[RMDB]
RNA sequence: GGGAACGACUCGAGUAGAGUCGAAAAUGCCGGUACCGGUAUCAACCCUCUGUACCAAUUAGCUCAUCAUAUAGUUGAAAACCCAAACGACAAGACCAAAGUUAACUUGCUAUAUGGGAACAAGACAGGCAUAUGCACUAUUCGUAGUGCAUAUGCCAAAAGAAACAACAACAACAAC
Reactivity to DMS in 0.01 (KOAc 150mM, MgCl2 10mM, bicine 150mM(pH8.5), 24C), signal-to-noise 1, nucleotides 027 to 126: u030g000c000c000g090g000u180a160c000c180g000g040u030a060u030c100a270a090c110c010c030u030c050u000g030u000a020c100c000a140a110u060u040a030g000c030u000c030a070u000c060a070u040a030u050a060g000u000u000g000a060a070a070a090c010c030c000a140a010a080c040g000a070c030a050a040g000a070c100c280a070a020a190g000u020u050a100a110c040u000u000g000c060u000a010u000a070u000g000g000g050a170a060c190a000a000g000a040c210a070
Reactivity to 2A3 in 0.01 (KOAc 150mM, MgCl2 10mM, bicine 150mM(pH8.5), 24C), signal-to-noise 3, nucleotides 027 to 126: u040g000c000c010g000g070u120a140c050c070g000g050u050a060u090c030a020a100c010c010c000u000c000u030g080u050a080c000c030a070a130u030u040a080g010c040u010c020a110u010c050a000u130a030u050a090g070u010u050g120a040a020a040a100c000c100c000a090a100a050c100g170a090c020a080a050g070a100c020c140a150a050a020g000u030u020a080a120c010u000u020g020c000u000a000u010a050u180g000g010g000a010a080c050a030a010g030a070c080a030